[RMDB]
RNA sequence: GGGAACGACUCGAGUAGAGUCGAAAAUCAGAGCUCGGGCCACGCAUUGUUCACCAGGUUAUUAAUCAAAUGAGAAAAGUAAUUUUUCAGAGGCUUGGCAUUCAUUUGAUUGGCAUGCCAUGGCAUGGCUAUGCCGUACUUUCGAGUACGGCAUAGCAAAAGAAACAACAACAACAAC
Reactivity to 2A3 in 0.01 (KOAc 150mM, MgCl2 10mM, bicine 150mM(pH8.5), 24C), signal-to-noise 7, nucleotides 027 to 126: u090c010a020g000a020g030c020u010c020g030g060g000c010c020a050c030g060c030a080u040u080g030u070u040c020a050c040c000a020g050g010u070u110a080u050u170a070a020u020c020a030a000a010u050g020a020g040a050a060a010a000g050u130a070a220u060u050u060u080u100c080a060g040a050g140g050c000u010u020g020g000c010a040u050u000c000a000u000u000u080g070a090u020u040g030g000c040a010u040g000c020c000a080u060g040g000c040a030u070g040
Reactivity to DMS in 0.01 (KOAc 150mM, MgCl2 10mM, bicine 150mM(pH8.5), 24C), signal-to-noise 4, nucleotides 027 to 126: u020c030a080g000a120g020c060u010c030g010g010g020c010c060a040c140g000c060a040u020u010g010u000u000c050a120c020c020a050g000g000u010u010a070u020u020a070a040u010c020a030a030a030u000g000a030g000a130a050a030a040g020u070a050a080u020u020u030u030u040c090a100g000a120g020g000c020u020u000g020g010c090a110u050u000c000a000u000u010u020g000a030u010u010g000g000c140a020u000g000c000c060a060u040g000g020c060a070u010g000